The record gives the reactivity of an RNA of 177 nucleotides to DMS. Conditions: 150 mM KOAc, 10 mM MgCl2 and 150 mM bicine (pH 8.5), 24 C.
RNA sequence: GGGAACGACUCGAGUAGAGUCGAAAAAAGUCGAGUUGUUGAAAAAUGACCUGAGAGCAAAAGGCGAGACCCGUAGAUCAGGACGAGCUGGAGUGGGCAACCACGAACGCGAGGACUGUGAAAACGGUUGCCUGUAAUAGUUCGCUAUUACAGGCAAAAAAGAAACAACAACAACAAC
Reactivity to DMS in 0.01 (KOAc 150mM, MgCl2 10mM, bicine 150mM(pH8.5), 24C), signal-to-noise 3, nucleotides 027 to 126: a050a080g000u030c120g000a280g010u000u000g000u000u020g010a050a060a030a010a010u000g000a120c030c000u000g010a080g030a200g000c100a050a060a070a020g000g010c050g000a100g050a060c300c020c020g020u000a020g000a300u000c020a010g000g020a050c000g000a280g020c010u020g000g000a300g000u000g000g000g000c290a080a090c000c010a000c000g010a300a290c200g000c010g000a300g000g000a080c000u000g000u000g000a070a090a020a020c010g030g010
Source: RMDB libraries RFM100 and RFMREP, as collected in RNAgym.